[RMDB]
RNA sequence: GGGAACGACUCGAGUAGAGUCGAAAAUAAUAUGCAUAUCGAGUUCCCAUGUAUAUUCGUAGCCCUGCGGCUGUAACAUUACAGCUUAGUAAGAAUGCUACCUAACGAUAGCUAGCCGCAGGAUUAAUUGAAUACUAGUAUUCGUACUAGUAUUCAAAAAAGAAACAACAACAACAAC
Reactivity to DMS in 0.01 (KOAc 150mM, MgCl2 10mM, bicine 150mM(pH8.5), 24C), signal-to-noise 9, nucleotides 027 to 126: u010a040a030u000a010u000g000c020a020u000a150u010c140g010a200g010u000u000c000c000c000a050u000g000u000a020u000a020u000u000c200g010u000a110g010c110c010c000u000g010c010g010g010c000u000g010u010a070a100c190a110u000u000a010c020a150g000c210u010u000a100g010u000a020a020g000a090a090u010g010c010u000a010c030c020u010a090a140c210g000a040u000a010g000c010u000a030g010c000c000g010c000a010g000g010a020u000u000a040a150
Reactivity to 2A3 in 0.01 (KOAc 150mM, MgCl2 10mM, bicine 150mM(pH8.5), 24C), signal-to-noise 4, nucleotides 027 to 126: u080a000a010u040a010u070g030c030a020u110a080u240c110g090a070g110u010u000c000c010c010a010u000g000u000a030u010a020u020u140c120g070u070a030g030c010c000c000u000g000c000g000g000c000u020g060u070a050a040c030a080u030u060a020c020a040g090c110u050u050a050g010u000a030a010g030a060a020u060g010c000u010a030c020c000u060a100a040c050g120a110u010a010g010c020u010a000g000c000c000g000c010a000g000g010a000u010u010a010a020
Chemical mapping of a 177-nucleotide RNA with DMS and 2A3. For 2A3 the reverse transcriptase was SuperScript II with manganese. Values cover nucleotides 27 to 126. For DMS the reverse transcriptase was MarathonRT. It was measured as part of the RMDB library M2PK90.